[RMDB]
RNA sequence: GGGAACGACUCGAGUAGAGUCGAAAAGAAAGAAAGAAAGAAAUCUGACAGAAUGACGGAUUCGAUCGUUGUGGUCGGCGGGCCACCACGUCAUUCCUUCGCACUGUCUCCGGGCAGACCGCCAUAAAAUUGCCGUAGGUUUCGACCUACGGCAAUUAAAAGAAACAACAACAACAAC
Reactivity to DMS in 0.01 (KOAc 150mM, MgCl2 10mM, bicine 150mM(pH8.5), 24C), signal-to-noise 2, nucleotides 027 to 126: g000a030a070a090g000a060a090a120g040a080a060a150g010a100a080a100u010c050u000g000a050c090a050g010a080a050u040g000a020c020g010g030a090u030u020c120g000a110u040c050g000u000u000g020u030g000g020u000c030g000g000c130g020g000g010c000c000a010c020c020a010c030g000u000c000a040u010u010c000c040u000u050c040g040c140a120c000u010g000u020c000u030c160c080g000g000g020c030a030g000a060c050c050g000c000c000a150u040a050a070
Reactivity to 2A3 in 0.01 (KOAc 150mM, MgCl2 10mM, bicine 150mM(pH8.5), 24C), signal-to-noise 4, nucleotides 027 to 126: g110a040a080a000g090a030a060a010g130a040a100a000g070a020a130a020u060c040u040g030a030c020a030g130a120a230u210g010a000c050g040g010a010u070u070c060g020a050u210c040g000u010u000g000u000g010g000u010c020g010g070c050g030g010g010c020c000a000c000c000a010c000g040u030c010a000u010u010c000c000u030u070c020g040c050a060c040u010g000u010c000u000c030c020g000g000g010c000a030g060a160c000c060g000c000c000a020u220a040a180

The data come from the RNA Mapping Database (RMDB), library RFM100. The record gives the reactivity of an RNA of 177 nucleotides to DMS and 2A3. The DMS profile rests on 3,223 reads.